Chemical mapping of a 177-nucleotide RNA with 2A3.
The RNA was probed in 150 mM KOAc, 10 mM MgCl2 and 150 mM bicine (pH 8.5) at 24 C.
RNA sequence: GGGAACGACUCGAGUAGAGUCGAAAAAAGCACUUGAUACUAACCAAGCUAUCUGUAUCCUGAUGCCGCUCCAGAAGUUGGGAUGUAUCUUGUGAUAGCUGGGUUUUAUAAGUGCAAUAUUAAAGUACAGGCAAAGCUUGUUCGCAAGCUUUGCCUGAAAAGAAACAACAACAACAAC
Reactivity to 2A3 in 0.01 (KOAc 150mM, MgCl2 10mM, bicine 150mM(pH8.5), 24C), signal-to-noise 1, nucleotides 027 to 126: a000a000g030c030a050c000u040u100g050a090u060a160c140u000a000a000c000c000a000a000g000c000u000a000u000c000u130g190u100a140u080c010c020u000g000a020u000g000c020c020g010c020u050c000c000a060g060a290a000g240u090u170g000g020g000a000u120g040u040a020u000c050u050u070g050u000g000a000u020a000g000c000u020g000g000g000u020u000u000u000a010u000a010a010g000u000g000c000a000a000u060a020u020u130a060a090a050g080u050a070